[RMDB]
RNA sequence: GGGAACGACUCGAGUAGAGUCGAAAACGCUGGGUCCAUCCCAGCGGCAACAGCAAGCUGAAGCGCGCACGGUGAUGACCUGUUGCUCGCUGUCAUGGACCUGUGCUGAAGCGCGCACGGCAACCGAAAGGUGCGAAAGGUCAGUUUCGACUGACAAAGUGUUGAUAAAUUUCGAUUUAUCAACACUAAAAGAAACAACAACAACAAC
Reactivity to 2A3 in 0.01 (KOAc 150mM, MgCl2 10mM, bicine 150mM(pH8.5), 24C), signal-to-noise 5, nucleotides 027 to 156: c040g000c040u040g010g000g000u000c010c010a030u070c050c030c000a000g000c010g000g000c000a000a000c000a000g060c020a100a180g000c010u060g070a240a050g050c030g000c010g010c060a030c050g030g040u060g040a300u150g070a140c020c020u010g010u000u010g030c170u210c160g000c000u010g020u030c010a010u020g000g000a000c000c010u010g030u040g010c000u070g030a120a040g000c010g000c000g000c010a010c010g000g000c040a070a070c030c000g090a120a030a020g030g010u020g010c020g030a120a040a010g110g000u010c000a000g000u020u070u250c210g060a040c000u010g010a000c000a000a130
Reactivity to DMS in 0.01 (KOAc 150mM, MgCl2 10mM, bicine 150mM(pH8.5), 24C), signal-to-noise 2, nucleotides 027 to 156: c040g020c060u000g010g010g010u000c060c060a070u000c030c040c020a050g040c000g020g000c000a020a040c000a030g020c020a070a180g000c030u020g000a110a030g070c040g040c030g010c010a300c050g020g000u000g030a080u010g010a050c300c020u020g020u000u000g050c000u000c060g060c000u000g010u000c020a040u000g010g000a070c010c000u000g040u000g000c010u010g010a140a050g000c050g010c010g000c000a280c010g000g010c020a090a120c020c030g000a100a140a130g020g020u010g010c010g000a000a100a130g010g000u010c000a040g010u000u000u010c270g010a100c010u010g000a010c020a050a100